Chemical mapping of a 207-nucleotide RNA with 2A3 and DMS.
For 2A3 the reverse transcriptase was SuperScript II with manganese.
For DMS, 2,300 sequencing reads were counted.
[RMDB]
RNA sequence: GGGAACGACUCGAGUAGAGUCGAAAAAAGCUGGUUGUCAGCAUGGACGCCAUCCUCCACGACUACGAGACGGCUAAGGACGCGGAUGGCAUGCAUGACCCCAAGAGGGCUUGCUUCUAUCAGAUGUCCCGCCUCACUCGUGACCGUGGCGCACUGAAAAUCGCUAUAGGUUCGCCUAUAGCGAUUUAAAAGAAACAACAACAACAAC
Reactivity to 2A3 in 0.01 (KOAc 150mM, MgCl2 10mM, bicine 150mM(pH8.5), 24C), signal-to-noise 2, nucleotides 027 to 156: a000a010g130c140u040g010g020u160u300g090u080c010a040g080c130a300u210g230g010a000c030g020c020c000a050u010c000c010u030c000c000a020c000g030a030c040u120a000c020g000a000g030a040c050g000g020c060u080a110a050g010g000a000c000g000c050g030g010a000u000g000g070c010a000u020g020c000a000u040g090a300c000c000c000c030a050a110g080a300g090g000g000c010u000u000g000c000u020u000c000u010a000u020c000a020g130a300u100g030u000c000c000c000g000c010c000u000c020a110c000u000c000g020u000g000a060c020c030g020u000g000g020c040g000c060a040c050u080g040a060
Reactivity to DMS in 0.01 (KOAc 150mM, MgCl2 10mM, bicine 150mM(pH8.5), 24C), signal-to-noise 1, nucleotides 027 to 156: a050a010g010c020u000g070g000u010u000g030u010c000a130g070c050a110u000g010g000a070c050g000c050c000a220u000c030c000u020c020c020a040c030g010a060c060u000a050c060g020a060g050a060c120g000g020c210u000a150a110g000g010a000c000g030c020g010g010a010u000g000g010c160a010u000g050c010a010u010g000a300c010c000c000c030a170a190g000a300g020g000g000c020u000u000g000c010u000u000c020u000a070u000c020a030g010a100u020g000u000c030c030c050g020c010c000u000c020a140c030u000c030g020u000g020a080c030c050g020u000g000g040c050g000c040a130c000u000g000a150